[RMDB]
RNA sequence: GGGAACGACUCGAGUAGAGUCGAAAAGAUAUGGAGGUCAUCUAUGAGUGGCGAAGAACUCGGAAACGAGGGAGCCACCAUAGAGUGACCUCCUAAGUCAAAACCGUAGACCUUCGGGUCUACGGAAGCAUUCAUGGAUGUUCGCAUCCAUGAAUGCAAAAGAAACAACAACAACAAC
Reactivity to DMS in 0.01 (KOAc 150mM, MgCl2 10mM, bicine 150mM(pH8.5), 24C), signal-to-noise 1, nucleotides 027 to 126: g010a020u000a300u020g000g010a030g000g010u010c000a040u000c010u000a000u010g010a120g020u000g000g010c010g010a070a130g030a120a110c040u000c000g010g000a070a090a280c010g010a010g020g000g010a130g000c000c000a020c000c000a000u000a000g000a040g000u000g010a010c020c000u010c010c000u010a000a020g000u000c030a080a030a070a140c000c000g010u010a000g010a010c000c000u000u030c290g030g010g010u000c010u000a000c030g020g010a000a060
Reactivity to 2A3 in 0.01 (KOAc 150mM, MgCl2 10mM, bicine 150mM(pH8.5), 24C), signal-to-noise 1, nucleotides 027 to 126: g040a000u090a020u200g000g020a030g000g000u010c000a020u000c000u020a010u020g070a130g300u020g000g030c060g220a240a010g020a070a020c000u000c010g020g020a090a050a020c010g000a000g030g020g010a020g000c000c000a000c000c000a020u000a000g010a000g020u030g000a000c000c000u000c000c000u000a000a000g000u000c000a000a000a070a100c010c000g000u000a000g010a000c010c010u050u100c300g180g010g000u000c000u000a000c010g010g000a010a020